[RMDB]
RNA sequence: GGGAACGACUCGAGUAGAGUCGAAAAGAAGGUCGAGACACUCACCGAAUAUACUCGACUUCACGAGUGAAGGAAAUAGAGGUGAUAGUGUCGAAGUGAUCGAUGCGUCACGCGCAGAAGACCGAAAGGGACAGCUUAUCUUCGGAUAAGCUGUCCCAAAAGAAACAACAACAACAAC
Reactivity to DMS in 0.01 (KOAc 150mM, MgCl2 10mM, bicine 150mM(pH8.5), 24C), signal-to-noise 1, nucleotides 027 to 126: g030a140a190g000g000u060c000g000a210g000a000c000a040c000u000c000a100c000c000g000a050a210u040a110u000a280c080u000c090g020a300c120u040u020c100a000c080g000a120g080u000g000a140a020g000g000a050a230a160u000a080g000a170g000g000u000g000a000u060a000g030u000g040u000c000g000a000a030g000u000g020a000u000c130g110a180u000g000c140g010u000c050a010c060g010c100g000c300a130g000a030a120g000a070c010c000g070a100a130a000
Reactivity to 2A3 in 0.01 (KOAc 150mM, MgCl2 10mM, bicine 150mM(pH8.5), 24C), signal-to-noise 2, nucleotides 027 to 126: g190a090a010g000g000u000c010g000a040g030a030c000a000c000u000c000a000c000c000g080a100a000u210a000u020a000c060u050c050g110a110c050u070u100c130a080c170g000a080g000u180g050a180a000g000g160a000a000a170u200a080g080a050g000g000u000g010a000u110a090g000u000g000u000c000g080a050a010g010u040g040a040u050c000g100a040u190g000c010g000u000c120a000c050g140c020g000c130a070g000a110a000g000a010c030c000g060a040a000a000